RNA sequence: GGGAACGACUCGAGUAGAGUCGAAAAACAUUAACUAUCGUCGCCUGAGCGUAACCGGCGCGGCGCACUCCGCUUUACUGGAACCGAUACUCGAUCGGUUCCAGGACGCCUGCGCGGGGCUGCACGCCGAUAGGUCUUGAUUCGUCAAGACCUAUCGAAAAGAAACAACAACAACAAC
Reactivity to 2A3 in 0.01 (KOAc 150mM, MgCl2 10mM, bicine 150mM(pH8.5), 24C), signal-to-noise 6, nucleotides 027 to 126: a010c050a080u210u220a090a080c050u080a070u190c030g030u020c020g030c010c010u060g080a060g030c020g020u030a050a060c040c020g040g000c020g000c010g030g000c040g020c020a040c040u050c020c020g050c060u110u130u210a090c000u010g000g010a000a000c000c000g000a010u080a140c060u110c150g130a040u010c000g000g000u000u010c000c000a000g000g000a000c020g090c030c080u120g010c020g010c000g030g000g010g000c010u040g020c020a010c030g030c010
Reactivity to DMS in 0.01 (KOAc 150mM, MgCl2 10mM, bicine 150mM(pH8.5), 24C), signal-to-noise 6, nucleotides 027 to 126: a090c110a130u000u010a090a100c130u010a080u010c050g000u000c060g010c020c020u000g010a090g010c020g020u000a070a130c090c040g010g020c070g020c060g010g010c050g020c040a060c080u000c040c030g020c040u010u010u010a160c010u000g000g000a010a000c000c000g010a020u000a090c190u010c240g000a140u000c000g010g010u000u000c000c000a000g000g000a070c200g020c130c090u010g020c100g010c010g000g010g010g010c100u000g000c040a080c030g010c060